[RMDB]
Structure probing data (DMS and 2A3) for a 177-nucleotide construct. 2A3 adducts were read by reverse transcription with SuperScript II with manganese. Values cover nucleotides 27 to 126. Conditions: 150 mM KOAc, 10 mM MgCl2 and 150 mM bicine (pH 8.5), 24 C. The 2A3 profile rests on 25,738 reads. For DMS, 28,520 sequencing reads were counted.
RNA sequence: GGGAACGACUCGAGUAGAGUCGAAAACAGUAUCAGAUCGCACAGUACGGGGUUGUCCGCGAACGUCUUCCGCAUCGAGCGGGCAUGAUUGCGCAACGUUUCGCGCCAGUCGCCGGCUUCGAUGUACCCUAUUAGUCAGAUUCGUCUGACUAAUAGGAAAAGAAACAACAACAACAAC
Reactivity to DMS in 0.01 (KOAc 150mM, MgCl2 10mM, bicine 150mM(pH8.5), 24C), signal-to-noise 9, nucleotides 027 to 126: c080a110g010u010a070u000c110a070g010a080u000c070g020c210a060c110a070g010u000a070c060g010g000g000g010u000u000g010u000c060c050g010c050g010a050a060c090g000u000c060u000u000c060c060g010c000a050u000c050g000a070g010c020g010g010g010c020a020u010g020a050u010u000g010c020g020c040a110a100c260g000u000u010u010c120g010c020g010c100c030a020g000u000c010g000c010c000g010g010c010u000u000c010g010a020u000g010u000a060c180
Reactivity to 2A3 in 0.01 (KOAc 150mM, MgCl2 10mM, bicine 150mM(pH8.5), 24C), signal-to-noise 9, nucleotides 027 to 126: c030a010g080u110a060u180c020a040g040a130u060c030g020c050a050c020a090g050u200a090c020g010g010g010g030u080u070g030u050c050c020g020c020g040a050a020c020g030u000c040u120u030c030c030g000c010a020u060c040g030a020g010c040g000g010g000c020a030u190g030a050u050u090g000c020g000c030a040a070c110g060u080u220u220c070g000c000g010c030c000a020g010u020c010g010c050c000g100g000c000u120u070c010g000a010u000g010u060a050c010